[RMDB]
RNA sequence: GGGAACGACUCGAGUAGAGUCGAAAACUCCGGCUUGAACACCUUGAUCGCCACCAUCUCGUCGAAGAAUGCCUUGUAAUGCGCGUCGGUGAUGCAGCCGAUGCCCUUGUCCAGGCUGUCGCCGGAUUCGAUGAUGCCGUAUUCCUUCAUCUUGGCGAAAUCCACAUGGUUUCGACCAUGUGGAUUUAAAAGAAACAACAACAACAAC
Reactivity to DMS in 0.01 (KOAc 150mM, MgCl2 10mM, bicine 150mM(pH8.5), 24C), signal-to-noise 2, nucleotides 027 to 156: c060u010c030c010g020g030c020u010u000g030a100a130c060a050c030c020u000u000g000a050u000c000g030c030c040a120c070c010a090u000c030u000c020g040u000c030g010a080a050g010a100a050u000g000c000c020u000u000g020u010a070a060u000g030c040g020c030g000u000c000g000g010u000g020a160u010g020c140a300g020c000c000g000a030u000g010c020c020c030u000u000g010u010c050c100a070g030g000c010u000g010u000c020g030c020c000g020g000a110u000u000c070g020a060u010g010a060u000g010c010c070g050u000a180u010u000c010c020u000u000c000a090u000c030u000u000g030g030c040g010
Reactivity to 2A3 in 0.01 (KOAc 150mM, MgCl2 10mM, bicine 150mM(pH8.5), 24C), signal-to-noise 4, nucleotides 027 to 156: c030u000c030c000g010g020c090u070u120g080a150a060c030a080c070c010u040u090g080a050u090c040g010c010c000a050c050c020a060u010c080u060c050g050u010c030g020a060a050g090a270a050u160g020c000c010u000u030g030u070a050a070u100g000c020g000c000g120u000c010g080g020u080g050a190u280g060c080a010g000c000c000g010a000u030g020c010c010c000u030u040g070u000c020c020a010g020g000c030u040g050u030c000g010c030c030g000g030a020u050u020c020g010a010u030g010a010u080g030c040c020g030u050a100u050u070c030c000u060u090c040a070u040c020u020u100g030g000c030g040
Source information:
Structure probing data (DMS and 2A3) for a 207-nucleotide construct. The reactions ran in a buffer of 150 mM KOAc, 10 mM MgCl2 and 150 mM bicine (pH 8.5), at 24 C. For DMS, 6,805 sequencing reads were counted. The data come from the RNA Mapping Database (RMDB), library OK3TST.